[RMDB]
RNA sequence: GGGAACGACUCGAGUAGAGUCGAAAAAGGGAUGUCAACAUGAAAGGUUAGUCGAUUUGAAGAGAAAAUAUUUUCGCAGCAGAUAAUCUAUCUUAUGGAGGAGGGUGGUGAGCAAAGAAGAUAAUCAUCAUAUUGUCUAUAAAACCUGGCAUCAAAGGAUAAUAUAUGAGUUCGCUCAUAUAUUAUCAAAAGAAACAACAACAACAAC
Reactivity to 2A3 in 0.01 (KOAc 150mM, MgCl2 10mM, bicine 150mM(pH8.5), 24C), signal-to-noise 4, nucleotides 027 to 156: a010g100g000g010a030u050g010u030c010a020a020c030a100u090g050a110a040a040g040g000u060u060a040g030u100c050g020a070u040u060u150g050a080a020g040a010g070a060a050a080a060u080a060u040u070u030u060c050g000c050a050g000c010a000g030a050u060a100a050u080c030u070a040u010c010u070u120a070u120g020g010a030g030g010a010g000g030g000u020g000g020u030g010a020g000c030a120a080a020g040a020a010g010a030u040a070a040u070c060a010u010c010a000u020a030u210u050g020u010c030u060a090u070a180a090a010a000c000c000u020g020g010c020a020u020c000a070a060a030g070
Reactivity to DMS in 0.01 (KOAc 150mM, MgCl2 10mM, bicine 150mM(pH8.5), 24C), signal-to-noise 2, nucleotides 027 to 156: a080g000g030g030a050u000g020u000c000a070a060c030a080u000g010a080a060a090g010g060u000u010a100g020u000c030g000a110u010u000u020g010a100a130g010a080g000a090a080a060a200u000a070u000u010u000u000c020g000c030a090g010c050a110g000a120u000a020a050u000c030u000a120u000c060u000u000a100u000g030g000a110g010g020a080g010g010g030u010g000g030u010g020a060g020c060a060a070a080g020a060a090g010a140u000a020a050u010c030a110u000c030a090u010a060u000u000g010u000c010u000a190u000a060a060a040a030c040c050u010g010g000c030a030u000c050a060a070a130g000